RNA sequence: GGGAACGACUCGAGUAGAGUCGAAAACGAUCAAACGCUGGUCGAUAUUGAAGCGAAAGUGGAUGAUGAAUUUAUUGAGCGUUAUGGAUUAAGCGCCGGGCAUUCACUGGUGAUUGAGGAUGAUGUAGUGGUUCUACCAGUUCGCUGGUAGAACCACAAAAGAAACAACAACAACAAC
Reactivity to DMS in 0.01 (KOAc 150mM, MgCl2 10mM, bicine 150mM(pH8.5), 24C), signal-to-noise 1, nucleotides 027 to 126: c080g010a030u000c020a100a080a190c080g020c030u010g020g030u000c060g000a140u000a140u010u020g010a120a110g010c000g010a050a100a060g030u000g000g000a040u010g000a040u000g020a050a020u020u010u020a090u020u010g020a250g020c030g030u000u000a070u000g020g030a070u000u000a080a090g000c020g000c080c080g010g000g030c030a060u000u000c060a060c030u000g000g010u000g010a080u020u000g010a040g000g010a070u000g010a060u000g010u010a180
Reactivity to 2A3 in 0.01 (KOAc 150mM, MgCl2 10mM, bicine 150mM(pH8.5), 24C), signal-to-noise 1, nucleotides 027 to 126: c000g000a000u000c040a050a100a070c090g000c100u090g020g100u030c020g020a000u010a120u120u230g130a010a000g040c010g010a110a000a000g000u030g000g030a040u020g020a000u050g060a140a130u160u140u160a140u020u300g050a150g000c020g000u060u000a070u250g120g000a140u230u150a020a090g080c010g000c070c000g010g050g030c090a010u030u030c000a000c090u050g050g030u080g070a080u040u080g070a090g060g030a060u140g000a040u040g100u060a110